[RMDB]
RNA sequence: GGGAACGACUCGAGUAGAGUCGAAAACGCUGGGACAGUUGGGAGCGCGAUAAGACCUGAAGCGCGCACGGGUCUUUUGACGCGUAGUCCCACCUGUCCUGUGCUGAAGCGCGCACGGCAACCGAAAGGUGCGAAAACGGGCUGGUUCGCCAGCCCGCCUUUUACCUUGGUUCGCCAAGGUAAAAGGAAAAGAAACAACAACAACAAC
Reactivity to 2A3 in 0.01 (KOAc 150mM, MgCl2 10mM, bicine 150mM(pH8.5), 24C), signal-to-noise 3, nucleotides 027 to 156: c040g010c020u030g010g010g010a000c000a000g000u010u000g020g000g000a080g050c030g000c020g080a090u040a200a020g010a000c000c010u040g070a220a050g020c030g010c040g030c060a010c020g010g030g000u020c020u060u110u080u150g140a100c090g000c010g010u070a070g160u040c000c000c010a000c000c000u000g020u000c000c000u000g000u010g000c010u060g030a110a020g000c000g000c000g000c020a010c010g040g000c050a080a040c020c000g040a090a040a020g020g000u020g000c010g020a060a050a020a070c020g000g000g000c000u010g030g030u080u080c210g050c080c000a010g000c000c000c000g020
This 207-nucleotide RNA was probed chemically with 2A3.
Values cover nucleotides 27 to 156.
The 2A3 profile rests on 3,733 reads.
Conditions: 150 mM KOAc, 10 mM MgCl2 and 150 mM bicine (pH 8.5), 24 C.
It was measured as part of the RMDB library RNAMAK.